[RMDB]
An RNA of 207 nucleotides, treated with DMS and 2A3 and read out base by base.
The RNA was probed in 150 mM KOAc, 10 mM MgCl2 and 150 mM bicine (pH 8.5) at 24 C.
2A3 adducts were read by reverse transcription with SuperScript II with manganese.
The DMS profile rests on 3,226 reads.
DMS adducts were read by reverse transcription with MarathonRT.
Reactivities are given for positions 27 through 156.
It was measured as part of the RMDB library OK3TST.
RNA sequence: GGGAACGACUCGAGUAGAGUCGAAAAUGUCGAUGUGUUGACACCUGGCCAUUCACUGGCCUUGAAUGUCCACAUUCACCUCCUUGAAAUCGAUGCCCCGUAUCGGAGGCUCCAUGUGGAUUUGGGGGCAGAGGCCUGUACUCCAGAUGGUGGGGUGAUUCUGAACGAAGUUCGCUUCGUUCAGAAUAAAAGAAACAACAACAACAAC
Reactivity to DMS in 0.01 (KOAc 150mM, MgCl2 10mM, bicine 150mM(pH8.5), 24C), signal-to-noise 1, nucleotides 027 to 156: u000g020u000c030g040a030u000g010u000g020u000u000g020a040c000a030c000c010u000g000g040c020c000a060u030u020c140a180c150u010g030g010c010c030u010u000g000a080a090u010g040u000c010c010a010c000a070u010u010c050a110c050c010u000c010c020u020u000g000a070a070a120u000c060g000a100u000g000c030c000c020c000g020u000a140u010c090g000g030a070g020g000c030u000c040c020a030u010g040u000g020g010a130u010u000u000g000g040g010g020g050c000a080g030a110g000g030c040c000u000g020u000a090c050u000c010c020a060g010a070u010g020g050u000g000g010g020g030u000g010
Reactivity to 2A3 in 0.01 (KOAc 150mM, MgCl2 10mM, bicine 150mM(pH8.5), 24C), signal-to-noise 3, nucleotides 027 to 156: u200g010u050c010g000a040u030g010u000g000u060u060g030a020c010a000c000c000u010g100g000c000c010a040u200u140c110a080c130u070g010g000c000c000u010u010g030a070a030u090g000u000c010c020a010c010a000u080u070c030a010c010c010u030c000c010u050u150g110a120a130a060u080c030g030a040u100g020c000c020c010c020g040u080a070u070c060g010g000a010g010g020c000u010c040c020a040u050g050u060g160g000a020u100u080u120g030g000g010g000g000c000a010g040a030g050g070c010c030u060g040u160a190c040u070c040c030a050g000a070u060g020g030u040g020g010g000g000u050g020